[RMDB]
RNA sequence: GGGAACGACUCGAGUAGAGUCGAAAAGAUUUGUGUCUAGCUGUGCUUUUUUUUUGAUGAGCGUACUGCUCUUGUACUUUGCGAAUCAUCUUCGCUUGCACAGCACCACGGACGAAGAUCAAAAAGAGGGUAUCCUAUCGUUCGCGAUAGGAUACCCAAAAGAAACAACAACAACAAC
Reactivity to 2A3 in 0.01 (KOAc 150mM, MgCl2 10mM, bicine 150mM(pH8.5), 24C), signal-to-noise 1, nucleotides 027 to 126: g050a060u000u050u130g180u010g000u040c040u080a040g050c030u040g010u010g000c010u050u000u000u010u000u030u000u010u080g170a130u020g000a000g040c030g040u080a030c020u050g010c000u000c000u030u080g030u000a120c050u070u050u130g020c000g090a110a060u140c040a020u010c150u010u010c010g000c000u010u030g000c000a000c000a010g010c000a000c080c030a000c010g030g000a000c010g040a160a030g050a000u050c030a040a090a110a030a000g020a100
Conditions: 150 mM KOAc, 10 mM MgCl2 and 150 mM bicine (pH 8.5), 24 C. Chemical mapping of a 177-nucleotide RNA with 2A3. The 2A3 profile rests on 673 reads. For 2A3 the reverse transcriptase was SuperScript II with manganese. As a SHAPE reagent, 2A3 marks flexible, mostly unpaired nucleotides at the ribose 2'-OH.